This 177-nucleotide RNA was probed chemically with 2A3 and DMS. DMS adducts were read by reverse transcription with MarathonRT. High DMS reactivity at an A or C suggests that its Watson-Crick edge is free. 2A3 adducts were read by reverse transcription with SuperScript II with manganese.

[RMDB]
RNA sequence: GGGAACGACUCGAGUAGAGUCGAAAAAGAGUCUAGCUAGUAAGUAGGAUUCUCAUAAGGAAUCAUUUCCACUAUGAAUCUAGUCACUAAAUAAACACAAUUAGCUACUGUGUGUAAUAGUGAGUGUCUAAUGUAUCAUGUUCGCAUGAUACAUUAGAAAAGAAACAACAACAACAAC
Reactivity to 2A3 in 0.01 (KOAc 150mM, MgCl2 10mM, bicine 150mM(pH8.5), 24C), signal-to-noise 9, nucleotides 027 to 126: a000g130a010g050u060c040u050a020g010c010u010a010g020u050a110a050g010u020a030g070g050a020u030u000c050u000c030a110u090a150a060g020g010a010a010u030c020a050u090u100u050c030c020a040c020u040a040u100g050a040a050u020c020u020a020g050u040c000a000c000u010a020a020a050u050a020a030a000c010a000c000a020a090u110u080a060g040c040u120a060c040u010g000u000g000u010g010u030a010a040u010a020g010u010g040a050g050u130g060u010
Reactivity to DMS in 0.01 (KOAc 150mM, MgCl2 10mM, bicine 150mM(pH8.5), 24C), signal-to-noise 9, nucleotides 027 to 126: a080g010a140g010u010c070u000a120g010c020u010a020g010u010a070a190g010u000a070g000g000a020u000u000c010u000c040a110u030a130a300g000g010a020a010u010c030a130u000u010u010c070c070a300c070u000a020u000g000a120a110u010c010u000a040g000u010c010a010c010u000a000a010a060u000a090a060a010c000a000c000a000a020u000u010a130g010c170u030a100c100u000g000u000g000u000g000u010a090a200u000a010g010u000g000a090g010u020g010u010
It was measured as part of the RMDB libraries RFM100 and RFMREP. Reactivities are given for positions 27 through 126. Conditions: 150 mM KOAc, 10 mM MgCl2 and 150 mM bicine (pH 8.5), 24 C.